[RMDB]
RNA sequence: GGGAACGACUCGAGUAGAGUCGAAAAUAGGUCGUGUUCGCACGACCUAAGAUAAAAUGCAUAAAAUGCCAGUAACCCGAAACACAAGGGAGUCCACCUGGCCUACGAUGUCGUUCGCGACAUCGAACGUGAAGGGGAAAUUCGUUUCCCCUUCACGAAAAGAAACAACAACAACAAC
Reactivity to DMS in 0.01 (KOAc 150mM, MgCl2 10mM, bicine 150mM(pH8.5), 24C), signal-to-noise 3, nucleotides 027 to 126: u000a000g000g000u000c000g040u000g030u000u020c200g040c000a010c000g000a000c000c000u000a000a010g020a140u010a070a060a090a050u030g010c080a060u000a040a060a110a170u000g010c040c010a020g010u020a080a160c020c000c000g010a130a070a120c210a040c210a070a180g000g010g010a160g020u000c050c070a110c180c020u010g000g010c000c190u000a070c030g010a030u000g010u000c000g000u000u010c300g020c010g000a020c010a000u000c000g000a020a120
Reactivity to 2A3 in 0.01 (KOAc 150mM, MgCl2 10mM, bicine 150mM(pH8.5), 24C), signal-to-noise 3, nucleotides 027 to 126: u040a010g010g010u010c000g020u000g040u050u040c240g020c070a000c010g020a000c000c000u000a000a000g000a000u100a000a120a060a050u140g010c020a010u110a210a190a060a020u150g000c000c000a010g020u050a120a090c000c010c010g040a140a300a000c080a010c020a110a090g000g000g010a050g040u010c050c010a050c030c020u010g020g000c000c010u050a030c020g000a000u000g000u000c000g010u010u030c250g010c010g060a000c000a000u020c000g010a050a020
The record gives the reactivity of an RNA of 177 nucleotides to DMS and 2A3. The DMS profile rests on 2,099 reads. The reactions ran in a buffer of 150 mM KOAc, 10 mM MgCl2 and 150 mM bicine (pH 8.5), at 24 C.